[RMDB]
RNA sequence: GGGAACGACUCGAGUAGAGUCGAAAAAGAGCACAUGGGCAUUAGAUACCAUCAACAUCCUGCUGUAUGAUGACAACAGCAUCAUGACCUUCAACCUCAGUCAGGUGAGUAUCAGUGCCUGGGGAAGAUUGAGAGGGUUUGGGAUCUUCUUAGUGUAGAUACGCUAGGAUUUCGAUCCUAGCGUAUCAAAAGAAACAACAACAACAAC
Reactivity to DMS in 0.01 (KOAc 150mM, MgCl2 10mM, bicine 150mM(pH8.5), 24C), signal-to-noise 1, nucleotides 027 to 156: a090g000a120g000c110a100c120a120u000g000g030g040c020a070u000u030a180g070a050u000a040c030c070a080u030c060a250a160c040a040u000c000c040u000g000c020u000g050u000a040u010g010a080u000g010a220c060a100a060c020a060g010c010a030u000c020a070u000g000a130c110c080u020u030c030a050a080c070c010u000c060a150g000u010c130a060g040g010u020g000a060g000u000a030u000c040a070g030u000g000c020c000u010g000g100g000g020a050a080g000a150u000u000g020a050g000a090g000g020g010u000u040u000g000g020g000a070u000c040u010u000c010u000u000a080g000u000g070u000a240
Reactivity to 2A3 in 0.01 (KOAc 150mM, MgCl2 10mM, bicine 150mM(pH8.5), 24C), signal-to-noise 4, nucleotides 027 to 156: a000g120a000g020c100a060c020a160u100g000g040g000c010a020u020u030a090g010a030u000a000c030c030a090u130c060a010a090c000a110u080c000c020u030g030c010u010g020u070a030u030g060a020u060g060a060c050a220a010c030a200g090c010a010u010c010a010u070g090a120c010c020u120u130c120a070a080c040c040u060c030a020g080u070c030a000g010g000u010g050a040g000u000a010u010c010a010g000u000g000c000c010u000g010g020g000g010a030a100g050a110u090u210g040a040g030a020g080g060g010u120u150u080g020g020g000a030u010c010u080u000c020u030u160a080g000u040g000u100a030
Structure probing data (DMS and 2A3) for a 207-nucleotide construct. The RNA was probed in 150 mM KOAc, 10 mM MgCl2 and 150 mM bicine (pH 8.5) at 24 C.